[RMDB]
Chemical mapping of a 177-nucleotide RNA with 2A3 and DMS. The RNA was probed in 150 mM KOAc, 10 mM MgCl2 and 150 mM bicine (pH 8.5) at 24 C. The DMS profile rests on 15,935 reads.
RNA sequence: GGGAACGACUCGAGUAGAGUCGAAAAGAAGUUGAGGAUAUCGAAGGCGUAUGGAUGCGUACCUAUGGUGCUGAUUGCUUUGGGCUACCAGAUUUCGCAGCACACGCACAAGGUCAUCACGAAGGGCACGCUAUAAUACCUUCGGGUAUUAUAGCGUAAAAGAAACAACAACAACAAC
Reactivity to 2A3 in 0.01 (KOAc 150mM, MgCl2 10mM, bicine 150mM(pH8.5), 24C), signal-to-noise 9, nucleotides 027 to 126: g140a050a020g030u110u090g050a040g040g020a050u040a030u130c040g050a100a070g030g000c030g010u030a030u080g080g090a140u060g000c020g030u050a060c030c060u070a090u110g040g010u010g010c030u050g080a180u130u190g080c060u180u130u170g100g020g010c030u130a100c020c020a030g010a100u080u110u060c030g000c010a000g010c000a010c010a000c030g010c010a020c010a050a060g030g000u020c030a030u040c020a010c100g060a040a060g010g020g000c050
Reactivity to DMS in 0.01 (KOAc 150mM, MgCl2 10mM, bicine 150mM(pH8.5), 24C), signal-to-noise 6, nucleotides 027 to 126: g000a080a110g010u020u010g000a080g000g000a030u000a050u010c040g010a170a190g000g020c010g010u010a060u010g000g010a150u020g000c030g020u010a030c140c070u030a130u010g010g020u010g010c010u000g010a100u030u030g020c150u020u000u010g000g000g000c030u040a060c020c040a040g000a140u010u010u020c040g010c030a020g000c020a020c070a060c070g010c030a030c050a060a170g010g000u010c090a040u000c050a060c070g020a080a080g000g000g000c130
For 2A3 the reverse transcriptase was SuperScript II with manganese.